Source: RMDB library RNAMAK, as collected in RNAgym. The record gives the reactivity of an RNA of 207 nucleotides to 2A3.
RNA sequence: GGGAACGACUCGAGUAGAGUCGAAAAGGUGAGGUUCGCCUCACCAAAAGGGGUCGUGGGAGAAGAGGCUUUUGACGAGCUGAAGCCUCCACGGCUCGAUAAGCUCCCCACCUUCUCUGCACGACGGAGGCACCCAAAACGAGGUCUUCGGACCUCGGUACAGGGGUGUGUUCGCACACCCCUGUACAAAAGAAACAACAACAACAAC
Reactivity to 2A3 in 0.01 (KOAc 150mM, MgCl2 10mM, bicine 150mM(pH8.5), 24C), signal-to-noise 2, nucleotides 027 to 156: g010g010u010g010a000g000g040u100u130c220g140c010c020u010c020a020c010c030a030a020a010a030g090g000g010g010u010c010g000u010g000g000g000a010g000a030a030g040a060g110g020c050u060u040u080u210g270a220c030g010a000g030c000u000g030a070a000g020c000c000u020c000c000a010c000g010g010c000u000c000g000a040u020a050a000g010c010u110c080c030c040c000a050c000c000u010u030c000u010c000u210g190c010a000c000g030a010c020g040g000a000g020g030c000a070c020c010c000a030a070a000a030c050g000a000g010g000u000c010u070u150c200g090g000a000c000c010u000c000g000

Values are in units of 0.01, from 0 to 300, in steps of 10.